[RMDB]
RNA sequence: GGGAACGACUCGAGUAGAGUCGAAAAAACGUUGCAUGAUCGUAAAACAUGCCCGGCUUACCGUGAGCCGCCUUUGAAAGAAAGGUUUACACGGACUCUGUUGCGUUACGGACGUACCUAACUUGUGAAAACGGCAUCUUGUUCGCAAGAUGCCGAACAUCAAUUCCAUCUUCGGAUGGAAUUGAUGAAAAGAAACAACAACAACAAC
Reactivity to 2A3 in 0.01 (KOAc 150mM, MgCl2 10mM, bicine 150mM(pH8.5), 24C), signal-to-noise 4, nucleotides 027 to 156: a010a000c000g000u000u010g010c000a000u000g020a050u160c030g060u220a000a030a020a090c000a000u010g010c000c010c000g000g010c000u010u090a080c010c010g000u000g000a000g010c000c000g020c000c010u030u010u010g080a120a040a000g030a020a010a000g010g000u010u040u040a030c010a000c020g030g010a050c040u080c050u150g120u120u060g040c030g010u020u040a080c120g080g020a030c030g030u060a080c010c020u090a120a140c050u110u080g070u050g180a030a030a050a040c010g000g010c000a000u000c000u020u030g030u060u060c120g020c120a000a000g000a000u000g000c000c000g000a000a000
Reactivity to DMS in 0.01 (KOAc 150mM, MgCl2 10mM, bicine 150mM(pH8.5), 24C), signal-to-noise 1, nucleotides 027 to 156: a040a150c020g000u000u000g000c010a030u000g030a050u000c010g000u020a060a050a040a050c010a020u000g010c000c030c020g030g000c000u000u000a130c020c030g010u010g010a070g000c010c060g040c000c000u010u000u010g000a180a100a200g000a120a010a040g040g020u020u020u000a130c040a110c000g000g010a160c170u010c080u020g020u000u000g010c000g000u000u000a100c050g000g010a070c120g020u000a110c020c040u000a070a120c040u010u000g000u000g000a090a060a080a170c040g040g020c000a010u000c020u000u000g010u000u010c260g020c000a000a020g010a040u000g010c000c000g000a000a030

The data come from the RNA Mapping Database (RMDB), library M2RFOK. Structure probing data (2A3 and DMS) for a 207-nucleotide construct. 2A3 is a SHAPE reagent: it acylates the 2'-hydroxyl of flexible nucleotides of all four kinds. The DMS profile rests on 3,052 reads. The RNA was probed in 150 mM KOAc, 10 mM MgCl2 and 150 mM bicine (pH 8.5) at 24 C. The 2A3 profile rests on 4,332 reads.